This 177-nucleotide RNA was probed chemically with 2A3 and DMS. It was measured as part of the RMDB libraries RFM100 and RFMREP. Reactivities are given for positions 27 through 126.

RNA sequence: GGGAACGACUCGAGUAGAGUCGAAAAGCACUCACGGCGACCGUGGCCUUCUAGGCCUGGCCGCCAUACGCCCGCCCGCCAACCGCUUCCAACCAACCCAGCAAGCACAACCUCUUUGGGCGUUCCAUUCAACUUAUCAAUUCGUUGAUAAGUUGAAAAAAGAAACAACAACAACAAC
Reactivity to 2A3 in 0.01 (KOAc 150mM, MgCl2 10mM, bicine 150mM(pH8.5), 24C), signal-to-noise 9, nucleotides 027 to 126: g030c020a010c060u080c010a060c080g010g000c010g010a020c010c010g270u090g010g000c020c010u190u200c180u300a080g010g000c000c000u000g010g000c000c000g000c000c000a000u020a010c030g010c000c010c010g020c010c000c000g000c020c010a040a040c020c010g000c020u070u020c020c010a050a050c010c010a010a060c000c010c000a010g020c030a040a020g030c010a030c010a070a070c010c000u030c010u040u060u050g020g010g000c000g000u020u000c010c000a010
Reactivity to DMS in 0.01 (KOAc 150mM, MgCl2 10mM, bicine 150mM(pH8.5), 24C), signal-to-noise 8, nucleotides 027 to 126: g010c080a080c070u010c100a100c180g010g020c020g010a020c010c000g000u010g020g010c000c000u000u030c240u040a090g020g010c000c010u010g000g010c010c000g030c000c010a030u010a030c130g000c020c010c030g000c040c030c030g010c040c040a060a080c060c030g000c040u010u010c030c030a070a100c070c060a070a090c020c000c010a040g010c060a070a100g010c040a060c090a080a100c070c020u000c030u000u010u010g000g000g000c020g000u000u000c010c010a190